[RMDB]
RNA sequence: GGGAACGACUCGAGUAGAGUCGAAAACGGUAUUGGUCAAGGCUAUACCGACAGCGCACCUUCAAAAGGGCGCGUAAUCCCCGGCCAAGCGCCGAAAUAUGAAUAGACACCGCUGGGCUGGUAGGGCAAAACAUGGCGAUCUUCGGAUCGCCAUGAAGUACGCAUUAAUGUUCGCAUUAAUGCGUACAAAAGAAACAACAACAACAAC
Reactivity to 2A3 in 0.01 (KOAc 150mM, MgCl2 10mM, bicine 150mM(pH8.5), 24C), signal-to-noise 4, nucleotides 027 to 156: c000g000g000u030a020u070u220g030g000u070c070a100a090g120g000c010u010a000u000a010c000c000g030a040c050a090g000c010g000c090a300c070c020u070u100c080a110a150a080a070g010g010g000c000g000c000g000u000a010a030u010c000c000c000c010g010g000c000c000a050a020g010c030g000c090c050g050a020a060a020u180a080u060g100a080a080u120a100g050a030c040a010c040c030g000c040u020g000g040g000c000u020g070g000u060a070g050g030g000c080a020a010a010a110c000a030u010g000g000c000g000a000u000c010u030u040c090g080g000a000u000c000g010c000c000a000u000g000a000a000
Reactivity to DMS in 0.01 (KOAc 150mM, MgCl2 10mM, bicine 150mM(pH8.5), 24C), signal-to-noise 2, nucleotides 027 to 156: c000g020g030u000a030u000u000g020g030u000c070a130a120g050g000c050u000a130u000a020c000c010g010a060c050a230g000c020g010c000a010c000c030u020u000c050a140a110a300a290g000g010g020c000g020c010g020u000a030a110u000c020c000c010c050g040g000c020c010a060a040g000c030g050c020c030g000a040a080a070u010a200u090g010a140a190u000a190g000a170c040a070c110c020g030c030u000g020g030g000c010u010g020g000u010a050g000g010g040c050a060a070a050a140c010a010u000g000g000c000g000a010u000c000u000u010c270g010g010a030u000c010g030c000c000a000u000g020a010a130